An RNA of 177 nucleotides, treated with DMS and read out base by base. DMS adducts were read by reverse transcription with MarathonRT. The RNA was probed in 150 mM KOAc, 10 mM MgCl2 and 150 mM bicine (pH 8.5) at 24 C. Reactivities are given for positions 27 through 126.
[RMDB]
RNA sequence: GGGAACGACUCGAGUAGAGUCGAAAAUAUAUUAAUUAAUACCAAUUGAGUUGUGCGUACUUCAUUGCAGAUAUUUUACCAGACCUGUCUGAGUUUUUCGUUCAAGUUUGGUUGAAAUCGGCUUGAGACCAUCUUAUUGAUUCGUCAAUAAGAUGGUAAAAGAAACAACAACAACAAC
Reactivity to DMS in 0.01 (KOAc 150mM, MgCl2 10mM, bicine 150mM(pH8.5), 24C), signal-to-noise 2, nucleotides 027 to 126: u000a060u030a190u010u020a060a120u030u000a130a110u010a260c020c010a080a110u010u010g010a200g020u010u000g020u000g010c110g010u000a050c090u000u000c040a040u010u010g020c020a040g000a060u000a060u000u000u000u010a010c020c000a040g000a020c020c060u000g010u000c020u000g010a090g010u000u000u000u010u000c010g020u000u000c000a010a050g010u000u000u000g000g010u000u000g000a000a030a040u010c020g000g020c010u000u000g000a090g000